[RMDB]
RNA sequence: GGGAACGACUCGAGUAGAGUCGAAAAGAUAUGGACCCUGUGUGGGAGCUCAGUAUCGGAAACGAUACCUGAGCGACGAUCACAUGGGUCCUAAGUCAAAACAAUGUGGUGUUCGCACCACAUUGAACGUUUACGCCUGGUUCGCCAGGCGUAAACGAAAAGAAACAACAACAACAAC
Reactivity to DMS in 0.01 (KOAc 150mM, MgCl2 10mM, bicine 150mM(pH8.5), 24C), signal-to-noise 1, nucleotides 027 to 126: g020a010u000a050u040g010g020a050c000c000c000u010g000u020g000u000g010g010g030a050g040c000u020c010a070g000u000a000u000c000g000g000a020a010a030c030g000a000u000a010c300c300u020g000a000g040c000g020a030c250g080a050u000c010a000c000a010u000g030g020g050u000c010c000u000a000a030g000u000c000a060a060a230a260c000a000a010u000g040u000g000g020u000g000u030u030c220g060c000a000c000c000a000c000a000u000u000g000a200a080
An RNA of 177 nucleotides, treated with DMS and read out base by base. Reactivities are given for positions 27 through 126. For DMS, 748 sequencing reads were counted.